[RMDB]
RNA sequence: GGGAACGACUCGAGUAGAGUCGAAAACCAGUCAUCUUGUGCCACUUCGGUGCGCAGAUGGGCGAGGUGUCCGGUCCCAUGAGUCAAAAGCCGGUAAGAACCUCUGGCCCGAGGUCGCUCGUCAGGAAGGUAUACAAAUGUUCGCAUUUGUAUACCUAAAAGAAACAACAACAACAAC
Reactivity to DMS in 0.01 (KOAc 150mM, MgCl2 10mM, bicine 150mM(pH8.5), 24C), signal-to-noise 8, nucleotides 027 to 126: c000c010a190g000u030c050a030u010c010u010u010g020u000g010c120c040a030c040u010u030c130g010g020u010g000c030g020c010a020g010a020u010g010g010g010c020g010a050g010g010u010g010u010c010c010g000g010u000c010c030c050a140u020g010a080g000u010c070a080a070a130a150g010c020c020g000g000u010a120a100g010a130a060c010c010u000c010u000g010g010c080c060c040g000a030g010g010u000c070g010c010u000c030g000u010c030a090g000g010a200
Reactivity to 2A3 in 0.01 (KOAc 150mM, MgCl2 10mM, bicine 150mM(pH8.5), 24C), signal-to-noise 9, nucleotides 027 to 126: c000c000a010g110u050c020a040u010c030u110u140g020u040g110c110c020a050c020u060u050c130g080g000u110g020c040g000c010a010g030a160u060g000g020g020c020g010a050g010g040u040g040u010c010c000g020g050u080c030c020c020a120u180g070a030g120u130c080a040a070a060a030g000c000c010g000g020u040a080a060g070a080a040c000c010u010c040u080g130g010c000c010c020g000a020g010g020u010c010g000c030u020c000g070u040c010a010g030g100a110
Chemical mapping of a 177-nucleotide RNA with DMS and 2A3.